[RMDB]
RNA sequence: GGGAACGACUCGAGUAGAGUCGAAAAGAUUAAUACUGCUCGCGUUCUUCUUUAGCAUCCGUUUUGGAUGCACCUUGAGGAACAAGGUGGGUAAUUUUCGUUUUGAAGAUAUGCCACCGACUUAUAGCUAGAAUACGUACUUCGGUACGUAUUCUAGAAAAGAAACAACAACAACAAC
Reactivity to DMS in 0.01 (KOAc 150mM, MgCl2 10mM, bicine 150mM(pH8.5), 24C), signal-to-noise 3, nucleotides 027 to 126: g000a080u010u010a070a150u010a250c050u000g010c010u000c030g000c130g010u000u000c100u010u010c030u000u000u000a190g000c010a020u000c000c010g020u000u010u020u010g030g020a000u000g000c010a020c190c090u000u000g010a050g020g000a060a060c110a110a130g000g020u000g010g040g000u010a020a000u000u010u010u010c010g010u000u000u020u020g010a020a020g000a000u000a010u000g020c010c000a000c000c000g000a070c110u010u000a080u000a100g010
Reactivity to 2A3 in 0.01 (KOAc 150mM, MgCl2 10mM, bicine 150mM(pH8.5), 24C), signal-to-noise 5, nucleotides 027 to 126: g010a000u120u180a110a090u080a210c020u020g000c000u010c000g030c010g000u000u000c000u010u080c020u060u130u090a020g000c000a010u000c010c040g260u040u130u230u300g000g000a010u010g000c010a020c010c000u040u080g050a030g020g030a070a060c060a100a100g000g030u020g010g010g060u120a030a050u040u010u010u010c060g100u080u030u240u300g010a020a000g010a000u000a010u180g060c000c010a000c010c010g020a030c020u090u150a120u120a160g010

An RNA of 177 nucleotides, treated with DMS and 2A3 and read out base by base. Conditions: 150 mM KOAc, 10 mM MgCl2 and 150 mM bicine (pH 8.5), 24 C. The 2A3 profile rests on 3,879 reads. DMS adducts were read by reverse transcription with MarathonRT. Reactivities are given for positions 27 through 126. For DMS, 2,841 sequencing reads were counted.